[RMDB]
RNA sequence: GGGAACGACUCGAGUAGAGUCGAAAAUAGGAUACAUUGGUAUUCACGAAUUGAAUAUUCUUGUUGGUCGUGAUAUUGGACAAGAAAUUUUAACUAAAAUGAAUACUCGUCUUAAGCAGUGGACUGAAAGAACCGGUUUUGCUUUUAGCUUGUAUUCCUUCUCUAAGCAAUUCGUUGCUUAGAGAAGAAAAGAAACAACAACAACAAC
Reactivity to 2A3 in 0.01 (KOAc 150mM, MgCl2 10mM, bicine 150mM(pH8.5), 24C), signal-to-noise 5, nucleotides 027 to 156: u140a030g010g010a010u030a050c030a080u070u260g110g000u040a020u030u030c030a020c110g080a060a080u130u130g020a060a030u100a130u090u040c020u000u030g020u010u030g060g050u050c040g060u020g100a030u040a080u230u130g080g010a000c020a020a010g060a040a080a030u100u150u140u180a100a040c050u110a090a040a080a130u090g000a000a010u020a000c010u020c030g140u030c020u020u020a010a010g000c000a020g030u100g090g090a010c010u020g060a080a160a180g070a110a080c090c020g020g030u020u030u070u020g010c000u020u050u030u040a020g010c000u010u000g000u010a010u000u000c000
Reactivity to DMS in 0.01 (KOAc 150mM, MgCl2 10mM, bicine 150mM(pH8.5), 24C), signal-to-noise 2, nucleotides 027 to 156: u010a120g010g000a150u000a080c080a120u010u010g010g020u010a000u000u000c000a030c070g010a130a240u000u000g010a030a060u000a240u000u000c010u010u010g020u000u000g010g030u000c090g000u000g020a160u000a070u020u000g040g030a040c020a030a010g010a000a020a300u000u000u000u000a010a200c030u000a080a060a090a070u010g000a020a030u000a030c010u000c100g000u000c040u000u010a060a170g000c030a040g000u000g000g010a290c020u000g020a050a080a160g000a080a130c050c050g000g000u000u000u000u000g000c020u000u000u000u010a150g010c040u010u010g030u000a090u000u000c020